Record summary:
Structure probing data (2A3) for a 207-nucleotide construct. Reactivities are given for positions 27 through 156. The RNA was probed in 150 mM KOAc, 10 mM MgCl2 and 150 mM bicine (pH 8.5) at 24 C. The 2A3 profile rests on 2,151 reads.
RNA sequence: GGGAACGACUCGAGUAGAGUCGAAAAGGGGUCGCUCGCGAUUGAGGGUAAGCUUUUGACGAGCUGAAGCCUCCACGGCUCGAUAAGCUUACCUCCCCACCAAUCCGAGCGACGGAGGCACCCAAAACUCUUAGCGUACUUCGGUACGCUAAGAGAACUUGUGAACUGAGUUCGCUCAGUUCACAAGAAAAGAAACAACAACAACAAC
Reactivity to 2A3 in 0.01 (KOAc 150mM, MgCl2 10mM, bicine 150mM(pH8.5), 24C), signal-to-noise 2, nucleotides 027 to 156: g070g010g010g000u000c010g000c000u000c000g050c220g010a000u000u010g010a020g010g000g010u000a000a000g010c030u110u160u300u300g190a160c090g000a000g020c000u000g020a070a050g010c000c000u000c010c000a010c000g010g020c000u010c000g060a130u100a300a040g000c010u000u020a010c000c010u050c000c020c000c000a010c020c000a000a000u020c000c010g000a000g000c000g000a000c020g000g000a000g000g010c010a020c000c000c000a080a090a120a100c010u010c000u020u000a000g000c000g010u000a000c020u030u070c300g060g000u000a000c000g000c010u000a000a000g000a000g000a000a020